[RMDB]
RNA sequence: GGGAACGACUCGAGUAGAGUCGAAAAGAUAUGGAUAGUAGUGGGUGCCAGUUCCAUUCGGAAACGAAUGAGAACGGUAAUACCCACACUAUCCUAAGUCAAAGUACAGGAGUUCGCUCCUGUACAACCAGUACUCAGUGUUCGCACUGAGUACUGGAAAAGAAACAACAACAACAAC
Reactivity to DMS in 0.01 (KOAc 150mM, MgCl2 10mM, bicine 150mM(pH8.5), 24C), signal-to-noise 2, nucleotides 027 to 126: g010a050u000a300u000g010g000a020u000a010g010u000a100g050u020g010g000g030u010g000c110c080a160g020u000u010c000c000a000u020u000c000g010g020a070a040a210c010g010a020a010u000g010a170g000a010a020c000g000g020u010a050a170u000a090c000c000c000a000c000a020c010u000a010u000c000c000u000a030a070g020u000c050a150a150a160g000u000a010c000a000g000g000a010g000u000u030c300g010c000u000c000c000u010g010u000a010c020a060a110
Reactivity to 2A3 in 0.01 (KOAc 150mM, MgCl2 10mM, bicine 150mM(pH8.5), 24C), signal-to-noise 3, nucleotides 027 to 126: g020a040u070a030u130g000g000a000u000a000g040u020a080g010u020g000g040g000u020g150c180c130a090g030u030u000c000c000a010u000u000c000g000g050a060a070a090c020g010a020a000u230g080a300g020a300a010c000g000g010u020a090a050u090a060c000c000c000a000c000a010c000u000a040u010c000c010u000a010a000g000u000c030a150a080a070g000u000a000c000a000g010g030a010g000u060u210c290g100c170u000c000c000u000g000u010a000c020a000a000